An RNA of 177 nucleotides, treated with DMS and 2A3 and read out base by base.
Reactivities are rounded to 0.1 and cut off at 0 and 3.
Reactivities are given for positions 27 through 126.
RNA sequence: GGGAACGACUCGAGUAGAGUCGAAAAGUGGCCAGAGCAGAUACGUAGGCCCAUGAAAUUGAUGAACUGAGAGUUGCUUCCAGUCCUGAGCGCACCAUCUGGAAUUCCAGUCUGAGGUUACAAUUAGCGAUACGCCUCUCUUCGGAGAGGCGUAUCGAAAAGAAACAACAACAACAAC
Reactivity to DMS in 0.01 (KOAc 150mM, MgCl2 10mM, bicine 150mM(pH8.5), 24C), signal-to-noise 1, nucleotides 027 to 126: g010u020g000g000c000c060a030g000a150g000c090a050g000a090u170a000c060g000u000a210g000g000c000c000c070a210u020g000a070a060a120u060u030g000a020u030g000a240a000c150u000g000a020g060a050g030u030u000g010c110u000u000c020c070a000g000u000c070c000u000g050a180g000c190g000c080a140c050c000a000u120c020u000g030g050a090a240u000u000c000c030a000g010u090c010u060g000a000g000g000u060u000a170c180a070a080u090u000a120g020
Reactivity to 2A3 in 0.01 (KOAc 150mM, MgCl2 10mM, bicine 150mM(pH8.5), 24C), signal-to-noise 1, nucleotides 027 to 126: g160u160g020g000c000c000a000g010a000g050c020a020g080a140u260a100c100g060u040a030g000g000c000c020c000a040u060g110a000a090a280u070u070g080a040u010g000a070a090c010u060g000a040g040a000g040u070u040g010c060u060u020c010c010a000g020u120c010c000u030g020a030g010c040g020c000a000c040c000a000u080c010u000g000g060a010a000u110u000c000c000a000g060u000c020u100g090a000g050g000u050u030a010c010a030a160u060u090a070g060